[RMDB]
RNA sequence: GGGAACGACUCGAGUAGAGUCGAAAAGGUGAUUGUAAUACUCGCUGCUGUCAAUCAUCGAUUGACAGCAUUAGACGGCUACAAUCACAUUACGUGAGUCGAUUAUUUAGCCGUCUAAUCGAUAACAUAACGCGAGAUAUGUUAAACUCACGUAUCGCGUACGUUGAUAGUUCGCUAUCAACGUACGAAAAGAAACAACAACAACAAC
Reactivity to DMS in 0.01 (KOAc 150mM, MgCl2 10mM, bicine 150mM(pH8.5), 24C), signal-to-noise 2, nucleotides 027 to 156: g000g060u010g010a040u010u000g010u010a050a100u010a060c030u000c000g020c010u010g020c000u000g010u000c010a000a050u000c020a250u020c220g010a070u000u010g000a010c000a010g010c000a010u000u000a030g010a020c000g010g000c010u010a090c040a010a020u010c010a030c000a120u010u000a000c000g020u000g000a060g040u000c060g050a150u000u000a180u010u000u000a110g020c000c010g000u000c000u000a010a030u000c090g000a260u010a060a110c080a100u000a030a110c030g010c020g010a040g020a150u000a030u000g000u000u010a060a120a060c030u000c010a010c020g020u000a060u000c060g020
Reactivity to 2A3 in 0.01 (KOAc 150mM, MgCl2 10mM, bicine 150mM(pH8.5), 24C), signal-to-noise 6, nucleotides 027 to 156: g110g000u000g000a010u000u020g000u020a050a030u040a130c020u010c040g030c030u030g000c000u010g000u000c000a020a010u000c080a130u150c220g010a000u000u000g000a000c000a000g000c000a000u000u000a000g000a000c000g000g010c010u020a000c010a000a000u000c000a000c000a010u020u070a000c000g000u000g000a000g010u040c040g080a110u040u060a060u100u200u100a040g000c000c000g010u000c000u000a000a010u030c040g060a050u060a140a020c030a080u100a080a010c060g020c040g030a010g030a080u010a010u000g010u010u050a100a040a010c000u000c000a000c000g000u010a020u050c060g000

Chemical mapping of a 207-nucleotide RNA with DMS and 2A3. For DMS, 4,936 sequencing reads were counted. The data come from the RNA Mapping Database (RMDB), library OK3TST. The reactions ran in a buffer of 150 mM KOAc, 10 mM MgCl2 and 150 mM bicine (pH 8.5), at 24 C.